The record gives the reactivity of an RNA of 177 nucleotides to DMS and 2A3. The RNA was probed in 150 mM KOAc, 10 mM MgCl2 and 150 mM bicine (pH 8.5) at 24 C. The data come from the RNA Mapping Database (RMDB), library OK1LIB. For 2A3, 2,069 sequencing reads were counted. For DMS, 2,127 sequencing reads were counted. Reactivities are given for positions 27 through 126. DMS adducts were read by reverse transcription with MarathonRT. For 2A3 the reverse transcriptase was SuperScript II with manganese.
RNA sequence: GGGAACGACUCGAGUAGAGUCGAAAAGCAGGCAUGUGCUUUAUGCAGAGCAAGACGGUGUCCACUGCAUAUUGGACAUGUGUAAACCGUUUUACACAUCGUCGCAGAAAACGGUUUCUGAAUGCCAAUCUUCGCUUCAUUUCGAUGAAGCGAAGAUAAAAGAAACAACAACAACAAC
Reactivity to DMS in 0.01 (KOAc 150mM, MgCl2 10mM, bicine 150mM(pH8.5), 24C), signal-to-noise 1, nucleotides 027 to 126: g000c060a030g050g000c000a000u020g010u020g030c000u000u000u000a030u020g030c000a000g000a160g030c140a080a110g000a070c020g040g030u000g000u000c000c040a160c050u000g000c020a020u000a000u000u030g020g000a030c040a030u000g010u000g010u060a010a020a020c020c020g020u000u000u000u000a060c080a070c160a080u040c180g010u000c080g000c060a170g000a000a000a020a060c060g000g020u000u000u020c070u000g000a070a000u010g000c010c050a190
Reactivity to 2A3 in 0.01 (KOAc 150mM, MgCl2 10mM, bicine 150mM(pH8.5), 24C), signal-to-noise 2, nucleotides 027 to 126: g000c000a000g010g000c000a010u030g000u070g130c000u000u000u010a000u000g000c000a000g010a010g010c020a000a110g070a020c050g120g130u050g030u000c000c020a070c000u000g000c000a000u000a000u000u030g030g030a000c000a000u000g000u000g050u090a000a000a020c000c010g010u020u030u010u100a040c060a010c020a090u150c070g150u070c100g000c090a010g100a020a000a000a000c020g010g000u000u020u030c010u020g150a060a060u200g140c000c000a020